The record gives the reactivity of an RNA of 177 nucleotides to 2A3. Conditions: 150 mM KOAc, 10 mM MgCl2 and 150 mM bicine (pH 8.5), 24 C.
RNA sequence: GGGAACGACUCGAGUAGAGUCGAAAAUCGUCGCAUCAAGGAUGAGCUGAUGGACGACGACCUGUGCCUGGUAAAUCUGCACCUCGAGUUUGCCGAUCGCCGUUCUGUCCCUGGAGCCUUCAGCAAUAUAGCUCCACGUCUUCGGACGUGGAGCUAUAAAAGAAACAACAACAACAAC
Reactivity to 2A3 in 0.01 (KOAc 150mM, MgCl2 10mM, bicine 150mM(pH8.5), 24C), signal-to-noise 2, nucleotides 027 to 126: u020c000g120u010c000g020c140a000u000c000a020a180g120g110a060u190g130a070g300c050u030g000a070u040g000g060a000c000g000a010c000g020a030c000c000u080g020u090g020c020c030u120g000g090u070a070a110a220u100c020u000g000c000a020c020c030u030c050g040a060g040u030u130u130g030c000c000g010a010u040c110g010c020c000g000u010u000c030u070g100u000c000c000c000u050g110g000a030g040c000c000u060u050c020a020g000c010a000a090u090